[RMDB]
RNA sequence: GGGAACGACUCGAGUAGAGUCGAAAAGCAGCCCUGUGCUGGCCUGGUGUAUACGUUUCUGUGCAGACGUACACCACCCUGUGUGAGCACAGAUGUAUUUUUACACAUGGCUCUGGACAGCUGUCUGACUCUGUCAGCAGCAGGCCUUGGAGGGGCAGCUGCCUAUAGCUUUCGAGCUAUAGGCAGCAAAAGAAACAACAACAACAAC
Reactivity to 2A3 in 0.01 (KOAc 150mM, MgCl2 10mM, bicine 150mM(pH8.5), 24C), signal-to-noise 2, nucleotides 027 to 156: g060c060a010g000c000c000c000u060g040u110g060c100u060g000g020c000c000u020g050g000u000g000u010a110u010a040c030g000u000u110u000c100u050g290u050g080c130a010g000a020c000g020u000a000c000a010c010c000a020c030c040c010u140g040u040g000u040g110a010g020c030a030c010a230g040a050u010g000u020a120u010u160u030u120u040a010c010a020c010a000u080g030g000c020u000c010u070g100g040a040c070a020g010c010u020g210u300c000u000g000a010c000u030c140u300g020u000c010a000g000c000a000g010c030a010g040g000c000c000u030u070g020g040a010g010g010g000g030c020a010

An RNA of 207 nucleotides, treated with 2A3 and read out base by base. The 2A3 profile rests on 999 reads.